[RMDB]
RNA sequence: GGGAACGACUCGAGUAGAGUCGAAAACGCGAUGGAUACGUCCAUCGCGAAUCCGUCCAAGCCGCGGACGUUAAACUGUGGCACGGUUGUGCCUAGGUGCAACCCUGCUGCGCAUGGCGGCACCCCUGCCCAAGCUACCGUCUACGGACGGUAGCAACACUCCACGACUAUUCGUAGUCGUGGAGUGAAAAGAAACAACAACAACAAC
Reactivity to 2A3 in 0.01 (KOAc 150mM, MgCl2 10mM, bicine 150mM(pH8.5), 24C), signal-to-noise 1, nucleotides 027 to 156: c010g030c000g000a000u010g030g000a010u010a060c210g130u000c000c000a000u000c000g000c000g000a010a020u030c020c000g000u010c010c000a090a010g010c000c020g010c000g000g000a000c020g000u010u010a050a020a010c180u170g000u010g000g000c000a000c000g020g010u000u010g010u020g010c010c000u130a240g140g000u000g000c010a000a000c000c000c010u010g010c010u000g000c030g030c110a120u140g020g000c000g000g020c000a120c000c020c000c000u080g040c000c040c010a040a060g000c000u000a000c000c000g010u000c000u020a050c220g060g000a000c000g010g000u000a000g000c000a000a000